Source: RMDB libraries RFM100 and RFMREP, as collected in RNAgym. The record gives the reactivity of an RNA of 177 nucleotides to DMS and 2A3. Conditions: 150 mM KOAc, 10 mM MgCl2 and 150 mM bicine (pH 8.5), 24 C. 2A3 is a SHAPE reagent: it acylates the 2'-hydroxyl of flexible nucleotides of all four kinds.
RNA sequence: GGGAACGACUCGAGUAGAGUCGAAAAUCAAGUAUCCUCUGGGGGUGUCCGUGUCCGUUCCGGGGGAAGAAGGGUGUUUUUGGACCAAACUCGUUGAAAACCAAUGCUUUUGCUGCCCUUGGAUUUCAAGGCAUACUUGAUUCGUCAAGUAUGCCUUAAAAGAAACAACAACAACAAC
Reactivity to DMS in 0.01 (KOAc 150mM, MgCl2 10mM, bicine 150mM(pH8.5), 24C), signal-to-noise 4, nucleotides 027 to 126: u000c090a120a110g000u030a070u000c010c030u000c050u010g010g000g000g010g010u000g010u000c050c040g010u010g000u000c020c070g000u020u020c010c020g010g000g010g000g020a080a060g000a080a060g000g000g010u000g010u010u000u010u000u030g010g000a160c090c080a090a100a070c060u020c100g000u000u000g000a090a060a070a090c030c020a020a060u020g000c030u000u000u010u010g000c050u010g010c010c010c020u010u000g010g000a130u010u010u010c070
Reactivity to 2A3 in 0.01 (KOAc 150mM, MgCl2 10mM, bicine 150mM(pH8.5), 24C), signal-to-noise 3, nucleotides 027 to 126: u150c020a000a040g100u050a060u060c000c000u000c020u050g000g020g010g000g010u040g040u000c030c020g030u090g070u040c000c030g060u080u010c000c000g010g000g000g020g020a020a010g060a030a020g050g040g020u050g060u030u050u040u100u100g060g000a030c020c000a050a080a070c050u080c070g100u060u070g070a070a060a020a020c030c000a030a010u040g010c040u050u090u110u150g060c060u090g010c010c000c000u000u020g050g010a060u060u090u110c040

Record summary: DMS adducts were read by reverse transcription with MarathonRT.